[RMDB]
RNA sequence: GGGAACGACUCGAGUAGAGUCGAAAACUGAUGUCGUCUUUAGGGCAUUUGACAUCUGCAACUAUAAGGCUAAGGUUGCUGGUAUUGGAAAAUACUACAAGACUAAUACUUGUAGGUUUGUAGAAUUAUACGCUUCGCUUCGGCGAAGCGAAAAGAAACAACAACAACAAC
Reactivity to DMS in 0.01 (KOAc 150mM, MgCl2 10mM, bicine 150mM(pH8.5), 24C), signal-to-noise 1, nucleotides 027 to 129: c070u000g010a020u040g030u070c040g010u050c150u000u020u060a260g030g010g000c030a050u030u010u080g050a020c050a070u000c020u020g040c020a060a030c030u000a040u010a040a000g000g010c220u050a090a270g000g000u000u030g020c190u030g030g070u030a030u030u000g030g030a180a010a000a000u030a070c010u000a070c110a040a070g010a140c020u090a030a110u090a070c050u020u010g010u020a060g000g010u000u000u000g030u000a040g020a090a040u100u000a060u060a070
Reactivity to 2A3 in 0.01 (KOAc 150mM, MgCl2 10mM, bicine 150mM(pH8.5), 24C), signal-to-noise 3, nucleotides 027 to 129: c110u050g030a000u000g000u000c020g000u060c070u090u200u190a260g120g000g000c000a010u000u000u150g000a020c000a110u000c010u000g000c000a000a000c020u010a040u020a150a000g040g070c040u030a210a000g120g010u000u110g000c110u030g030g000u000a000u010u080g110g000a090a060a060a000u030a040c000u010a010c030a080a040g030a010c020u060a080a000u110a240c010u000u000g000u030a000g060g130u000u000u050g000u000a000g010a040a010u190u060a080u060a040
An RNA of 170 nucleotides, treated with DMS and 2A3 and read out base by base. It was measured as part of the RMDB library 15KLIB. DMS adducts were read by reverse transcription with MarathonRT. The 2A3 profile rests on 3,209 reads.